[RMDB]
RNA sequence: GGGAACGACUCGAGUAGAGUCGAAAAAGUAUGAUGAUAGGUUGCACAUUAUCUGAUCGUCUUUUGAGCUCGCUUUAAGUAGUAGGCUUUGAAAUCAAUUGAUCCAGGGCUUAGGCCCCCCUCUGACUGUGUGACAAUGCUUCGGCAUUGUCACACAAAAAGAAACAACAACAACAAC
Reactivity to 2A3 in 0.01 (KOAc 150mM, MgCl2 10mM, bicine 150mM(pH8.5), 24C), signal-to-noise 1, nucleotides 027 to 126: a000g230u230a140u140g060a060u050g050a000u050a010g050g060u140u130g070c090a050c000a100u030u300a090u040c000u040g080a000u000c000g000u000c000u070u030u110u150g060a060g050c010u040c000g000c000u000u000u120a040a300g210u040a100g000u000a000g040g020c000u000u020u010g080a110a080a000u050c040a000a150u000u280g000a000u010c020c020a000g000g000g000c000u000u050a060g000g080c050c000c000c000c000c000u040c040u010g040a020c020
Conditions: 150 mM KOAc, 10 mM MgCl2 and 150 mM bicine (pH 8.5), 24 C. The record gives the reactivity of an RNA of 177 nucleotides to 2A3. Source: RMDB library RFM100, as collected in RNAgym. Reactivities are given for positions 27 through 126.